Record summary: Chemical mapping of a 177-nucleotide RNA with 2A3 and DMS. The reactions ran in a buffer of 150 mM KOAc, 10 mM MgCl2 and 150 mM bicine (pH 8.5), at 24 C. For DMS the reverse transcriptase was MarathonRT. Values are in units of 0.01, from 0 to 300, in steps of 10. 2A3 is a SHAPE reagent: it acylates the 2'-hydroxyl of flexible nucleotides of all four kinds. The DMS profile rests on 4,912 reads. For 2A3, 10,637 sequencing reads were counted.

[RMDB]
RNA sequence: GGGAACGACUCGAGUAGAGUCGAAAAGAUAUGGAUCACACGGUUGACAUGCUCGACCAUCGGAAACGAUGGGUCGAGCAACAGCAAUUGUGAUCCUAAGUCAAAGUGAUUGCUUCGGCAAUCACAAGUACCGAAAAAGGUUCGCCUUUUUCGGUACAAAAGAAACAACAACAACAAC
Reactivity to 2A3 in 0.01 (KOAc 150mM, MgCl2 10mM, bicine 150mM(pH8.5), 24C), signal-to-noise 4, nucleotides 027 to 126: g020a000u070a010u100g010g010a000u010c000a000c010a000c130g270g010u020u020g070a110c080a230u300g040c010u000c000g020a000c000c010a000u000c010g030g010a070a010a020c020g000a010u010g020g000g100u020c000g000a000g040c000a000a000c010a000g000c000a000a060u110u030g000u000g000a000u000c000c000u000a050a010g050u020c060a170a080a050g010u000g000a010u010u010g000c010u040u100c300g160g000c000a000a000u000c000a000c000a000a020
Reactivity to DMS in 0.01 (KOAc 150mM, MgCl2 10mM, bicine 150mM(pH8.5), 24C), signal-to-noise 5, nucleotides 027 to 126: g010a030u000a220u020g000g010a030u000c000a010c020a040c300g010g000u000u000g030a090c200a140u010g030c010u000c000g000a040c000c000a000u010c000g020g000a050a040a060c000g000a010u000g000g010g020u000c000g000a010g010c000a000a010c110a140g010c010a030a040u010u000g030u000g000a020u000c000c000u000a010a070g000u000c020a090a070a140g010u000g000a010u000u000g000c000u000u000c270g010g000c000a010a000u000c000a010c000a040a060